[RMDB]
RNA sequence: GGGAACGACUCGAGUAGAGUCGAAAAAGAAGAAUCUAGAUGAGGCUAAGGCUAGCGGCUCUGCCAAUCAACAGCAGAUUAAGCAGCUAGAGAAGGCGUGUAAUAUUGCUAAGUCAGCAUAUGAGCGCGACAGAGCUGUUGCUCGUAAGCUGGAACGGCUAGUACUGAUUUUCGAAUCAGUACUAGCAAAAGAAACAACAACAACAAC
Reactivity to DMS in 0.01 (KOAc 150mM, MgCl2 10mM, bicine 150mM(pH8.5), 24C), signal-to-noise 2, nucleotides 027 to 156: a080g020a120a050g010a090a080u000c020u000a100g010a120u010g030a120g030g050c040u010a060a180g010g000c010u000a020g050c000g010g070c000u000c000u000g000c010c030a090a180u000c080a070a090c070a030g020c020a170g010a200u000u010a030a090g000c010a030g000c010u000a010g040a090g020a080a200g030g030c010g040u010g000u000a110a090u000a050u000u000g020c010u010a070a150g010u000c130a030g030c000a090u010a030u000g000a130g000c020g000c020g010a190c020a080g000a100g020c020u000g010u010u010g010c000u000c060g030u000a010a060g000c020u000g000g010a040a090c030g000
Reactivity to 2A3 in 0.01 (KOAc 150mM, MgCl2 10mM, bicine 150mM(pH8.5), 24C), signal-to-noise 4, nucleotides 027 to 156: a000g170a050a010g040a010a040u080c070u110a090g030a130u090g040a030g070g000c020u050a050a030g050g000c000u020a020g010c000g000g000c020u000c000u010g010c030c030a060a180u190c060a060a050c010a070g000c000a000g020a030u060u080a090a010g020c010a000g000c010u020a010g010a030g010a090a050g090g000c060g010u010g000u040a060a080u060a050u090u180g020c040u020a060a090g120u160c050a000g030c000a000u000a010u050g030a040g000c020g010c010g060a030c040a050g130a030g040c060u040g030u160u200g010c010u010c040g020u040a030a060g000c000u000g010g020a040a040c050g040
The record gives the reactivity of an RNA of 207 nucleotides to DMS and 2A3. For 2A3 the reverse transcriptase was SuperScript II with manganese. The 2A3 profile rests on 3,479 reads. The DMS profile rests on 3,541 reads. It was measured as part of the RMDB library OK3TST. Conditions: 150 mM KOAc, 10 mM MgCl2 and 150 mM bicine (pH 8.5), 24 C.